Overview
An RNA of 177 nucleotides, treated with DMS and 2A3 and read out base by base.
RNA sequence: GGGAACGACUCGAGUAGAGUCGAAAAGAUAUGGAGUAGUCUAGAGCUGCUUGGAUUUAUCGGAAACGAUUGUCAGCAGCCUAGAGCUACUCCUAAGUCAAAACCUGUCGGGUUCGCCCGACAGGAAGUAUACCUUCACCUUCGGGUGAAGGUAUACAAAAGAAACAACAACAACAAC
Reactivity to DMS in 0.01 (KOAc 150mM, MgCl2 10mM, bicine 150mM(pH8.5), 24C), signal-to-noise 2, nucleotides 027 to 126: g000a060u000a300u020g010g000a000g000u000a000g010u000c000u000a010g010a170g000c000u000g020c020u000u020g020g000a030u010u000u000a000u010c020g000g010a150a080a190c000g040a000u000u000g000u000c000a010g000c010a000g000c000c000u000a010g000a090g020c000u000a010c000u000c000c010u000a010a040g010u000c060a090a110a060a100c000c000u000g010u010c000g010g000g020u000u020c250g020c010c000c000g000a000c000a000g000g020a000a030
Reactivity to 2A3 in 0.01 (KOAc 150mM, MgCl2 10mM, bicine 150mM(pH8.5), 24C), signal-to-noise 2, nucleotides 027 to 126: g020a000u060a040u170g000g000a020g000u010a000g000u000c000u010a020g000a070g010c000u030g020c040u120u150g130g000a070u260u300u260a020u050c000g010g050a040a040a060c010g000a010u010u030g030u010c010a000g030c000a000g000c020c010u000a000g000a010g010c000u000a000c000u030c000c000u000a010a000g020u000c020a000a000a100a160c000c000u000g000u020c010g000g010g090u060u110c220g080c060c010c000g010a000c000a000g010g000a010a000
The reactions ran in a buffer of 150 mM KOAc, 10 mM MgCl2 and 150 mM bicine (pH 8.5), at 24 C.